[RMDB]
RNA sequence: GGGAACGACUCGAGUAGAGUCGAAAAUCAUAAAACCGUUUGCACCGCCUGUAGCCACAGCAUGUAAUGUCGGUGAAGUUUGGGCGCCGUGAUCGUGGACGUGAUCGCUACGUGCAAAGCUAUUUGCGACACCUAUAGCGUUCGUUGUGCCGACGGUUGAGUAUAGGCUUUUCGAAGCCUAUACUCAAAAAGAAACAACAACAACAAC
Reactivity to DMS in 0.01 (KOAc 150mM, MgCl2 10mM, bicine 150mM(pH8.5), 24C), signal-to-noise 1, nucleotides 027 to 156: u000c050a140u000a070a060a060a070c030c020g020u000u010u010g010c010a020c000c000g030c030c000u000g020u000a150g030c020c040a070c110a140g000c070a070u000g050u000a110a060u010g010u010c010g020g010u000g000a090a140g060u020u000u020g010g000g000c000g030c020c060g000u000g010a100u010c020g000u000g000g000a060c070g020u000g010a100u010c080g000c030u000a010c080g000u000g010c010a070a060a200g000c030u000a180u010u010u000g010c060g020a130c040a080c020c030u020a100u000a040g030c000g040u000u000c030g010u000u000g050u000g000c010c000g000a010c010g030g010u000
Reactivity to 2A3 in 0.01 (KOAc 150mM, MgCl2 10mM, bicine 150mM(pH8.5), 24C), signal-to-noise 5, nucleotides 027 to 156: u120c020a040u180a080a080a020a010c000c020g000u010u010u020g000c000a000c020c000g020c020c000u100g030u090a020g000c010c030a010c010a000g050c020a050u170g120u300a240a070u060g080u160c060g000g000u090g030a100a050g060u080u180u170g010g020g000c000g000c000c020g040u070g140a140u180c060g070u130g040g040a040c070g040u100g040a080u110c010g000c000u030a020c070g010u030g080c020a010a030a170g000c030u110a180u240u160u210g010c020g080a050c010a020c040c020u040a020u030a070g010c010g020u020u050c010g010u040u070g000u000g010c010c030g000a000c010g000g000u000